This 170-nucleotide RNA was probed chemically with DMS and 2A3.
The reactions ran in a buffer of 150 mM KOAc, 10 mM MgCl2 and 150 mM bicine (pH 8.5), at 24 C.
Values cover nucleotides 27 to 129.
For DMS the reverse transcriptase was MarathonRT.
For DMS, 58,418 sequencing reads were counted.

RNA sequence: GGGAACGACUCGAGUAGAGUCGAAAAGGAAGAGAUGCUAGGAGUUGGUGGCGACCGGAGCGAGGAGAAAAGCAAAGAAAGCAACGGGGCUAGCCGACGGGUGUUCCGCCUCCCGAGAGGGGACGAGAGACGGUACAGUUCGCUGUACCGAAAAGAAACAACAACAACAAC
Reactivity to DMS in 0.01 (KOAc 150mM, MgCl2 10mM, bicine 150mM(pH8.5), 24C), signal-to-noise 9, nucleotides 027 to 129: g030g030a010a000g020a060g010a090u040g030c060u040a090g000g030a070g010u000u010g000g050u000g000g020c070g000a070c030c030g040g000a140g010c170g030a060g040g010a070g010a040a070a040a070g000c150a080a080a110g030a100a090a090g010c080a050a120c070g000g000g000g010c060u030a100g030c030c000g030a070c120g020g010g010u040g000u000u000c050c060g040c090c030u020c060c000c000g000a100g020a100g000g030g030g010a030c030g020a030g020a060g010a110
Reactivity to 2A3 in 0.01 (KOAc 150mM, MgCl2 10mM, bicine 150mM(pH8.5), 24C), signal-to-noise 9, nucleotides 027 to 129: g040g010a010a030g030a000g010a010u120g030c060u090a040g000g030a050g060u090u060g080g030u040g030g010c040g050a070c000c020g030g000a020g020c030g020a040g060g010a020g040a030a100a010a010g060c060a050a050a070g100a060a100a000g020c030a040a070c050g030g010g020g010c040u050a040g020c010c000g040a050c020g030g000g010u060g040u080u040c040c030g020c010c010u040c010c000c010g060a060g010a020g030g000g000g000a000c020g020a020g000a000g010a020